Chemical mapping of a 177-nucleotide RNA with DMS and 2A3.
Reactivities are given for positions 27 through 126.
DMS adducts were read by reverse transcription with MarathonRT.
High DMS reactivity at an A or C suggests that its Watson-Crick edge is free.
[RMDB]
RNA sequence: GGGAACGACUCGAGUAGAGUCGAAAAGUCGAACGUCGGCACCCCGCGGCGCCAUCUAGUGGCCGAAUAUGGUAGUGCAUCUAAUCGUCGCGCUGCGCCGCAUCUAGCGGAUGUGAUGACGUCGCGGUAAAUCCGCUCUGUUCGCAGAGCGGAUUUAAAAAGAAACAACAACAACAAC
Reactivity to DMS in 0.01 (KOAc 150mM, MgCl2 10mM, bicine 150mM(pH8.5), 24C), signal-to-noise 2, nucleotides 027 to 126: g050u000c020g010a090a110c260g010u000c040g010g010c040a210c050c050c000c000g010c020g040g010c000g000c000c000a020u010c020u000a110g030u000g010g010c000c000g000a030a060u000a100u010g020g020u000a050g000u000g000c150a120u010c050u020a030a090u000c100g000u000c010g010c210g020c020u010g000c030g010c000c000g000c010a110u010c170u020a120g020c020g000g010a110u000g000u010g000a020u000g010a030c000g010u000c010g000c000g010g020
Reactivity to 2A3 in 0.01 (KOAc 150mM, MgCl2 10mM, bicine 150mM(pH8.5), 24C), signal-to-noise 2, nucleotides 027 to 126: g010u000c000g020a160a110c170g200u130c020g120g000c010a060c000c000c000c000g020c000g000g000c000g010c010c000a020u010c020u100a050g030u020g020g000c000c000g030a040a020u210a130u200g040g060u020a040g090u070g190c050a080u010c040u070a150a060u120c080g030u020c010g000c000g040c050u010g000c020g020c020c010g000c000a020u100c100u130a040g000c000g010g010a050u110g110u090g070a020u000g000a020c010g020u000c010g000c000g020g000